RNA sequence: GGGAACGACUCGAGUAGAGUCGAAAAACGGGGCUUGAAACGCGGGUAGCGCGCACGCCCGGCGAAGAAGUUCGCAUACGCGGUGUGCUGGUGCCGAAGUGUCUGCUGCAACGGCACGCUCGACACCUAGAACAUACCGUAUUCGUACGGUAUGUAACUAUUCCCUGGGGUUCGCCCCAGGGAAUAGAAAAGAAACAACAACAACAAC
Reactivity to DMS in 0.01 (KOAc 150mM, MgCl2 10mM, bicine 150mM(pH8.5), 24C), signal-to-noise 1, nucleotides 027 to 156: a010c010g000g010g040g000c030u000u000g040a060a050a060c040g040c050g000g000g000u000a160g080c050g000c030g000c000a040c030g000c000c000c000g000g020c010g040a080a080g010a160a150g010u000u010c000g050c010a100u000a230c020g020c040g050g030u010g000u000g050c000u000g010g020u000g020c000c030g000a060a090g020u000g020u000c090u000g060c030u030g040c150a200a120c140g000g050c010a040c010g040c100u000c000g000a050c000a000c010c000u000a150g010a130a080c010a020u000a000c020c000g000u000a030u000u000c190g050u000a000c010g000g000u000a010u010g020u010a040a100
Reactivity to 2A3 in 0.01 (KOAc 150mM, MgCl2 10mM, bicine 150mM(pH8.5), 24C), signal-to-noise 2, nucleotides 027 to 156: a000c040g000g020g000g000c060u050u040g060a040a090a010c040g010c040g020g000g040u050a010g070c040g000c000g000c090a000c000g000c000c000c010g000g000c010g000a030a010g080a080a010g100u040u000c020g000c040a070u080a190c040g010c100g000g000u010g000u000g010c050u050g030g010u020g000c000c000g000a060a010g020u030g020u050c060u060g010c030u060g010c060a040a060c030g030g010c000a000c020g030c050u020c000g000a010c000a030c010c050u070a030g010a140a000c000a000u000a000c000c000g010u000a010u040u070c200g040u030a000c000g000g000u010a000u000g000u000a010a020

This 207-nucleotide RNA was probed chemically with DMS and 2A3. Reactivities are rounded to 0.1 and cut off at 0 and 3. The data come from the RNA Mapping Database (RMDB), library M2RFOK. 2A3 adducts were read by reverse transcription with SuperScript II with manganese. The reactions ran in a buffer of 150 mM KOAc, 10 mM MgCl2 and 150 mM bicine (pH 8.5), at 24 C. DMS adducts were read by reverse transcription with MarathonRT.